The record gives the reactivity of an RNA of 177 nucleotides to DMS and 2A3. Reactivities are rounded to 0.1 and cut off at 0 and 3. Reactivities are given for positions 27 through 126. For 2A3, 36,748 sequencing reads were counted. 2A3 adducts were read by reverse transcription with SuperScript II with manganese. It was measured as part of the RMDB library OK2TST.
RNA sequence: GGGAACGACUCGAGUAGAGUCGAAAAAGGGACAACGUGGGUUCUUCUACAGUUUUCAAUGAGUCAUGGCGCUUUGGGACCAAGACUGCGUCGGUGCUGAGUUAUUUUGGCACACUAGGCCCGUGCCAACAAUAUCAUAUUUCGAUAUGAUAUUGUUAAAAGAAACAACAACAACAAC
Reactivity to DMS in 0.01 (KOAc 150mM, MgCl2 10mM, bicine 150mM(pH8.5), 24C), signal-to-noise 9, nucleotides 027 to 126: a070g010g000g010a060c060a060a070c110g020u000g010g010g010u000u000c060u000u000c060u000a100c120a080g010u000u000u010u010c090a060a080u000g010a080g010u000c050a090u000g010g010c060g010c070u000u010u000g010g010g000a100c050c040a050a080g000a070c050u000g010c050g020u000c070g010g010u000g000c030u000g000a100g000u000u010a130u000u000u000u000g010g010c000a010c010a080c090u000a120g010g000c030c070c080g000u000g010c030c030
Reactivity to 2A3 in 0.01 (KOAc 150mM, MgCl2 10mM, bicine 150mM(pH8.5), 24C), signal-to-noise 9, nucleotides 027 to 126: a010g050g000g010a020c020a060a020c080g030u070g020g030g000u060u030c000u080u020c020u090a120c040a110g020u030u010u030u210c060a070a060u110g020a020g040u050c030a060u050g040g000c040g020c090u130u110u100g050g030g020a040c010c020a030a020g050a030c030u050g020c020g030u030c040g020g010u030g000c020u010g010a030g050u080u030a160u070u170u050u030g010g000c010a000c010a010c030u020a020g060g000c000c010c010g000u020g020c000c000
For DMS the reverse transcriptase was MarathonRT.